[RMDB]
RNA sequence: GGGAACGACUCGAGUAGAGUCGAAAAUAAUCGUCGAACUAUGAAAUCCUCCUUAAGCCCAAAAAUUUUUUUAGUUCUGUCAAUUAGUUUAAGGUCCUAUUUAAAAUUAAGCAUCUCCAUCAUGUAACCAGCUGGAUAUGUUCGCAUAUCCAGCUGGAAAAGAAACAACAACAACAAC
Reactivity to 2A3 in 0.01 (KOAc 150mM, MgCl2 10mM, bicine 150mM(pH8.5), 24C), signal-to-noise 1, nucleotides 027 to 126: u180a000a010u010c000g030u030c030g010a010a000c030u030a160u190g000a050a030a010u000c000c000u120c010c000u130u150a030a230g000c000c000c010a140a090a020a020a020u140u180u080u000u000u000u000a080g000u000u000c060u050g150u010c030a040a040u060u040a080g080u000u030u130a190a070g080g000u120c060c010u090a280u010u070u180a000a090a030a060u140u000a120a010g010c000a010u030c000u000c000c000a100u020c000a000u120g000u090a150a150